An RNA of 207 nucleotides, treated with 2A3 and DMS and read out base by base. For 2A3, 2,266 sequencing reads were counted. The DMS profile rests on 2,070 reads. The reactions ran in a buffer of 150 mM KOAc, 10 mM MgCl2 and 150 mM bicine (pH 8.5), at 24 C.
RNA sequence: GGGAACGACUCGAGUAGAGUCGAAAACUUUGAGGCAUUCAUUUCCUCAUCUGCAAAAAAACUAGGCUGGAUUAGAUUUAUCCACUGAUUCUGUGGUCUGUGUCUGCCAGUGACAUCCACGGAUGUUACUUAGCACCAUUAGUGGCACUCAGGCCUACACUACCAGUGGAUUCGUCCACUGGUAGUGAAAAGAAACAACAACAACAAC
Reactivity to 2A3 in 0.01 (KOAc 150mM, MgCl2 10mM, bicine 150mM(pH8.5), 24C), signal-to-noise 4, nucleotides 027 to 156: c040u040u050u100g020a030g010g000c050a070u030u090c050a070u070u300u050c010c020u030c010a060u070c040u100g050c080a060a040a050a050a030a040a090c110u110a100g060g010c130u070g060g000a030u050u070a090g090a200u110u250u130a040u030c000c010a020c050u040g040a160u110u040c050u080g140u070g020g000u010c010u010g000u000g030u040c060u060g000c010c000a010g000u000g010a000c000a010u000c000c030a040c150g060g010a000u000g000u010u000a000c000u030u110a050g120c080a050c120c010a120u100u170a080g100u110g010g000c000a000c020u010c000a000g040g000c020c000u000a010
Reactivity to DMS in 0.01 (KOAc 150mM, MgCl2 10mM, bicine 150mM(pH8.5), 24C), signal-to-noise 1, nucleotides 027 to 156: c030u000u000u000g010a000g000g030c060a120u030u000c170a210u000u000u000c000c020u010c030a060u000c060u000g090c050a000a000a090a090a120a080a100c110u000a090g000g010c070u000g060g000a100u000u000a110g020a160u000u000u000a060u010c030c040a050c020u000g000a130u000u000c010u030g010u000g000g000u010c010u000g020u010g000u000c040u000g080c000c000a150g030u000g030a000c030a020u000c010c000a180c270g070g000a020u000g000u000u000a020c000u000u020a050g020c060a130c030c030a100u000u010a110g020u000g000g000c060a080c080u000c060a090g010g000c000c000u010a110

For 2A3 the reverse transcriptase was SuperScript II with manganese.
Values are in units of 0.01, from 0 to 300, in steps of 10.